[RMDB]
Source information:
Source: RMDB library M2PK50, as collected in RNAgym. Chemical mapping of a 177-nucleotide RNA with 2A3 and DMS. The reactions ran in a buffer of 150 mM KOAc, 10 mM MgCl2 and 150 mM bicine (pH 8.5), at 24 C. For 2A3 the reverse transcriptase was SuperScript II with manganese.
RNA sequence: GGGAACGACUCGAGUAGAGUCGAAAAGAAGGCACUUUCGAGUGCCUUCAUGGGGAGCUCAGGUCUCCCUCCCUUGCAAACUCCCUAAGGGAGGAGACCUUAUUAGGUGCACUUUCGAGUGCACCAAAACUAUUCUCGAUUUCGAUCGAGAAUAGUUAAAAGAAACAACAACAACAAC
Reactivity to 2A3 in 0.01 (KOAc 150mM, MgCl2 10mM, bicine 150mM(pH8.5), 24C), signal-to-noise 4, nucleotides 027 to 126: g010a000a000g020g010c020a010c020u070u080u170c260g090a020g010u000g000c010c010u010u000c000a000u010g010g010g000g000a050g020c050u040c150a010g040g000u000c010u060c040c020c000u010c000c000c000u000u020g050c090a150a100a230c050u090c020c000c020u070a000a010g010g010g010a010g000g000a000g000a000c000c000u020u030a190u050u160a030g000g000u000g010c000a000c000u060u060u120c260g100a010g000u000g000c000a000c000c000a000a000
Reactivity to DMS in 0.01 (KOAc 150mM, MgCl2 10mM, bicine 150mM(pH8.5), 24C), signal-to-noise 6, nucleotides 027 to 126: g000a020a000g000g010c000a010c000u000u000u010c170g000a020g030u000g010c000c000u000u010c000a020u010g000g000g000g010a190g000c080u000c100a010g000g000u000c000u000c100c020c010u000c000c000c010u000u010g010c170a090a090a230c150u010c030c030c030u000a030a020g000g000g000a030g010g000a030g000a020c000c000u000u010a040u000u000a080g010g000u000g000c000a010c000u000u000u010c180g010a010g020u000g000c000a000c000c000a010a020